[RMDB]
RNA sequence: GGGAACGACUCGAGUAGAGUCGAAAACAGACAGACUGAGACUGAGACAGACUGUGAGAGUCAGUCAGUCUGUCUCUCAGUGACUGUCAGAGAGAGUCUCAGUGUGACACAGACAGUGACUGACUGACUAGUGGAGAUAUUUCGAUAUCUCCACUAGAAAAGAAACAACAACAACAAC
Reactivity to DMS in 0.01 (KOAc 150mM, MgCl2 10mM, bicine 150mM(pH8.5), 24C), signal-to-noise 9, nucleotides 027 to 126: c110a120g010a170c030a030g000a040c000u000g000a020g010a040c030u000g010a080g000a030c020a030g000a060c020u000g010u010g000a100g000a070g010u000c030a050g000u000c040a040g010u000c000u000g010u000c000u000c020u000c030a050g010u000g000a070c020u000g010u000c040a120g010a130g000a120g000a060g000u000c000u000c020a030g010u000g010u010g000a110c130a090c130a090g000a060c080a040g010u000g000a050c020u000g000a060c070u000g010a240
Reactivity to 2A3 in 0.01 (KOAc 150mM, MgCl2 10mM, bicine 150mM(pH8.5), 24C), signal-to-noise 9, nucleotides 027 to 126: c020a000g120a020c010a010g050a010c000u010g010a000g020a020c020u050g000a010g010a060c010a010g020a020c000u040g020u070g180a140g010a010g200u060c030a010g030u010c000a010g020u010c020u010g010u010c000u000c000u000c010a070g020u050g090a040c010u020g010u060c050a000g020a000g000a000g000a010g030u000c010u000c040a060g020u070g050u070g100a040c040a000c010a100g110a050c010a020g030u020g090a050c020u020g010a020c000u020g030a050